Overview:
An RNA of 207 nucleotides, treated with 2A3 and read out base by base. Conditions: 150 mM KOAc, 10 mM MgCl2 and 150 mM bicine (pH 8.5), 24 C. 2A3 adducts were read by reverse transcription with SuperScript II with manganese. For 2A3, 473 sequencing reads were counted. Source: RMDB library OK3TST, as collected in RNAgym.
[RMDB]
RNA sequence: GGGAACGACUCGAGUAGAGUCGAAAAAUGACUGUAGCUCGCUUUUACGGUCAGUAAAUGGACCAUAGACAGUACGUACUCACGAUGUUCUUCGCAGAGGACGAGAGCUUCGUAGACUACCUAGCGGAUCGCGACGACGACCAGGCUAUGGAUGACGAUUGUUAGGGCAGUUCGCUGCCCUAACAAUAAAAGAAACAACAACAACAAC
Reactivity to 2A3 in 0.01 (KOAc 150mM, MgCl2 10mM, bicine 150mM(pH8.5), 24C), signal-to-noise 1, nucleotides 027 to 156: a000u000g010a000c000u000g070u040a000g080c040u040c240g040c120u130u130u030u120a000c000g020g000u010c010a000g040u090a000a110a130u110g120g000a060c010c010a030u020a010g040a000c120a030g060u110a050c090g000u040a140c020u030c040a040c000g000a020u040g000u110u050c030u140u170c050g000c050a030g010a010g180g110a010c060g000a000g000a000g040c000u000u010c000g010u010a060g000a030c000u000a010c000c000u000a000g020c080g080g050a220u000c090g020c060g090a140c040g000a090c000g000a000c140c000a010g030g000c000u030a020u090g030g000a070u040g040a060c180g030